Chemical mapping of a 207-nucleotide RNA with 2A3 and DMS. The DMS profile rests on 4,226 reads. For 2A3, 10,528 sequencing reads were counted.
RNA sequence: GGGAACGACUCGAGUAGAGUCGAAAAGGGGUCUUCUCGGGAGUGGAGAACAUGCUUGGAUUUAUGGAGCUGAAGCCUCCACGGCUCCAUUGUCAGCAUUCCCUCCACGUUGAUCGAGAAGACGGAGGCACCCAAAAGUGGAACUUCGGUUCCACAACAUGUGUAUUGAGUUCGCUCAAUACACAUGAAAAGAAACAACAACAACAAC
Reactivity to 2A3 in 0.01 (KOAc 150mM, MgCl2 10mM, bicine 150mM(pH8.5), 24C), signal-to-noise 5, nucleotides 027 to 156: g090g010g030g010u000c010u000u000c000u000c000g000g000g010a020g010u010g030g010a010g000a040a050c070a090u020g010c040u250u300g170g030a090u150u180u130a020u070g000g000a000g000c000u020g020a100a020g010c000c010u000c000c010a010c010g000g010c000u000c000c000a000u010u030g060u070c110a040g010c000a000u060u070c070c030c000u000c000c000a010c010g160u180u020g000a000u000c000g000a000g000a000a000g000a000c000g000g000a000g010g000c010a030c000c000c000a010a110a010a050g000u010g000g010a000a000c000u040u080c270g120g000u000u000c000c000a000c000a000a010
Reactivity to DMS in 0.01 (KOAc 150mM, MgCl2 10mM, bicine 150mM(pH8.5), 24C), signal-to-noise 1, nucleotides 027 to 156: g010g000g040g010u000c000u000u010c010u000c010g000g030g000a050g050u000g030g030a040g030a040a070c090a060u000g000c010u010u010g060g010a110u000u010u000a010u010g020g000a040g000c000u020g000a050a120g000c070c000u010c010c030a300c040g000g000c020u010c000c010a040u000u010g040u000c020a110g030c000a060u000u010c070c050c000u000c000c000a010c020g000u000u000g000a110u010c010g000a070g070a000a030g000a010c000g020g000a050g160g060c030a090c030c000c020a050a060a100a160g000u000g000g010a020a010c030u000u000c240g050g020u000u010c000c000a000c000a040a170